[RMDB]
The record gives the reactivity of an RNA of 177 nucleotides to DMS and 2A3. For 2A3 the reverse transcriptase was SuperScript II with manganese. The data come from the RNA Mapping Database (RMDB), libraries RFM100 and RFMREP. The 2A3 profile rests on 973 reads.
RNA sequence: GGGAACGACUCGAGUAGAGUCGAAAACGUGUCCUGGUCAUUGGUAGUGCAGGCAGAGGAAAUGCGGGAAAGGUUGCUGUGUUUGGAGGGUCCACAUCUUCACCCUCCUGUCCCAGGAGCUUUCCUAACGUCCCAACUUGUUCGCAAGUUGGGACGUAAAAGAAACAACAACAACAAC
Reactivity to DMS in 0.01 (KOAc 150mM, MgCl2 10mM, bicine 150mM(pH8.5), 24C), signal-to-noise 2, nucleotides 027 to 126: c110g010u020g000u000c030c000u010g000g020u000c030a050u030u000g000g000u020a050g000u020g000c030a020g040g000c030a010g000a100g030g020a090a050a040u030g000c090g020g020g000a010a070a020g000g000u000u000g010c030u000g020u000g000u000u030u000g000g000a080g000g030g010u010c150c150a060c100a070u000c050u030u020c140a120c020c030c000u000c000c000u000g000u000c020c000c020a100g000g000a140g000c060u000u000u000c000c000u000a120
Reactivity to 2A3 in 0.01 (KOAc 150mM, MgCl2 10mM, bicine 150mM(pH8.5), 24C), signal-to-noise 2, nucleotides 027 to 126: c070g090u060g040u060c000c010u070g020g060u110c070a070u080u180g140g050u160a130g010u050g040c030a020g000g000c010a010g010a040g040g190a050a130a030u160g070c140g000g020g010a000a040a010g050g060u000u070g080c010u000g030u010g000u060u150u050g010g000a000g000g010g000u040c060c000a120c010a170u120c080u130u030c060a010c020c000c000u040c010c000u000g030u000c020c010c000a030g000g000a010g000c000u010u000u000c000c040u000a080